RNA sequence: GGGAACGACUCGAGUAGAGUCGAAAAGUGCUGUCGUGAUGCGGUCUUCGCAUGGACCGCACAAUGAAGAUACGGUGCUUCUGUAUCGUACUUAUUGUUUCUGGUGCGCUGUUAACCGAGGUAAAUAGAAUAGUAGUACAUUCGUGUACUACUAUUCAAAAGAAACAACAACAACAAC
Reactivity to DMS in 0.01 (KOAc 150mM, MgCl2 10mM, bicine 150mM(pH8.5), 24C), signal-to-noise 9, nucleotides 027 to 126: g020u000g010c020u010g010u010c030g020u010g000a110u000g020c000g010g010u010c040u010u010c180g020c140a070u020g000g000a010c010c020g010c010a010c030a030a050u010g010a050a050g000a150u000a010c010g010g010u000g010c030u010u020c190u010g030u000a010u000c010g010u010a020c030u000u000a070u000u000g000u000u000u000c020u010g010g020u000g000c020g010c070u000g010u000u010a080a130c050c030g000a080g010g010u010a050a060a080u010a120
Reactivity to 2A3 in 0.01 (KOAc 150mM, MgCl2 10mM, bicine 150mM(pH8.5), 24C), signal-to-noise 9, nucleotides 027 to 126: g050u040g010c020u030g030u070c030g080u080g090a130u030g010c000g000g010u030c030u120u150c100g040c090a080u150g020g000a000c000c000g010c000a000c000a000a030u130g050a030a030g040a060u030a020c000g000g010u010g020c000u160u110c070u180g030u030a020u020c000g010u000a010c010u040u100a070u050u060g030u020u050u010c020u030g030g010u030g010c030g000c030u030g020u090u080a050a030c020c020g020a080g060g060u160a080a110a110u120a080
This 177-nucleotide RNA was probed chemically with DMS and 2A3. Values cover nucleotides 27 to 126. The RNA was probed in 150 mM KOAc, 10 mM MgCl2 and 150 mM bicine (pH 8.5) at 24 C. 2A3 is a SHAPE reagent: it acylates the 2'-hydroxyl of flexible nucleotides of all four kinds.